This 177-nucleotide RNA was probed chemically with 2A3. 2A3 is a SHAPE reagent: it acylates the 2'-hydroxyl of flexible nucleotides of all four kinds. Values cover nucleotides 27 to 126. The RNA was probed in 150 mM KOAc, 10 mM MgCl2 and 150 mM bicine (pH 8.5) at 24 C.
[RMDB]
RNA sequence: GGGAACGACUCGAGUAGAGUCGAAAAUCGAUUGGUAGUCACACAGCAGUGCUGGUGGUGACCAGUCAGAAGGAUGCCAUGGCUCUUUCCGUAUAUCCAACGCCGCCGCCCGCUCUGCGCAGAACCACGACCUCAUGGCAUUCGUGCCAUGAGGUCGAAAAGAAACAACAACAACAAC
Reactivity to 2A3 in 0.01 (KOAc 150mM, MgCl2 10mM, bicine 150mM(pH8.5), 24C), signal-to-noise 2, nucleotides 027 to 126: u060c030g020a020u040u000g020g020u040a090g050u060c000a000c000a010c010a040g040c020a070g030u170g130c000u000g010g060u000g020g000u000g000a010c030c020a000g050u020c020a020g050a040a020g030g000a040u070g050c050c000a050u180g030g000c010u080c160u070u170u030c040c000g120u110a110u040a010u110c070c040a080a060c020g010c010c000g000c000c000g010c000c010c000g000c000u030c050u030g000c020g010c040a020g050a080a000c020c000a090